[RMDB]
RNA sequence: GGGAACGACUCGAGUAGAGUCGAAAAUCCUUCCUCUCCCUGUCGGUGAAGUCUCCCGCACGAGUCCUCUUCCUAGGUCCGGAGUCGAUCUCCAUCUGAUCCGUCCGGGCCCUCUUCGUCGGGGGAGCAAGAGUGGAGUUCGCUCCACUCAAAAGAAACAACAACAACAAC
Reactivity to DMS in 0.01 (KOAc 150mM, MgCl2 10mM, bicine 150mM(pH8.5), 24C), signal-to-noise 8, nucleotides 027 to 129: u000c010c010u000u000c000c000u020c000u030c000c000c000u020g000u040c070g000g050u030g030a080a090g010u020c030u000c000c000c000g070c100a170c030g000a040g000u020c000c000u030c030u020u020c000c000u040a080g000g000u010c020c020g030g020a040g020u020c250g000a030u020c000u010c150c180a110u060c190u030g030a030u020c030c100g030u040c000c030g030g010g060c030c020c030u030c030u000u000c060g040u020c020g000g000g010g000g050a040g000c160a060a060
Reactivity to 2A3 in 0.01 (KOAc 150mM, MgCl2 10mM, bicine 150mM(pH8.5), 24C), signal-to-noise 9, nucleotides 027 to 129: u010c000c000u030u070c010c000u020c000u020c000c000c010u050g070u100c040g070g020u060g030a030a010g050u010c010u010c030c020c020g070c030a050c030g000a000g030u020c020c000u010c000u050u030c010c000u020a040g000g010u000c000c000g020g010a020g090u230c050g030a010u010c030u050c080c040a200u080c130u140g010a010u000c030c070g060u000c000c000g030g000g000c000c000c000u020c000u050u040c020g070u010c020g020g000g000g000g000a010g010c020a080a050